[RMDB]
RNA sequence: GGGAACGACUCGAGUAGAGUCGAAAAGCCUUCUAUGCUCGCGUCUUUCGAGGGGUACGUCGCCACUGGCCGCUGAAAAGUGGUGUGGCACUGCUCCGGCGAGGACGUGGGCGGACCGGCGGGAUGGUAGUUUGACGUUGUUCGCAACGUCAAACUAAAAAGAAACAACAACAACAAC
Reactivity to 2A3 in 0.01 (KOAc 150mM, MgCl2 10mM, bicine 150mM(pH8.5), 24C), signal-to-noise 2, nucleotides 027 to 126: g000c000c000u020u070c120u100a050u070g000c000u000c000g020c000g020u020c040u020u300u060c020g000a040g020g000g050g000u010a010c200g010u000c140g000c000c000a000c010u050g180g000c020c000g000c010u050g050a050a000a000a060g010u030g000g000u030g010u000g010g000c000a000c000u000g000c010u020c000c000g000g060c020g000a020g000g000a000c000g010u060g000g000g010c010g010g010a000c000c010g000g010c000g000g010g000a090u140g110g040
Reactivity to DMS in 0.01 (KOAc 150mM, MgCl2 10mM, bicine 150mM(pH8.5), 24C), signal-to-noise 2, nucleotides 027 to 126: g010c040c010u020u020c160u010a290u060g010c000u010c040g020c000g000u000c000u000u080u020c010g010a300g010g000g000g000u000a010c190g020u000c150g050c010c000a010c000u050g010g020c000c010g000c020u000g000a070a050a190a010g000u010g010g050u000g020u000g000g030c020a000c000u000g000c010u000c010c010g000g040c000g010a000g020g000a010c020g060u000g010g000g000c000g020g000a090c300c190g040g000c000g000g010g000a080u010g000g000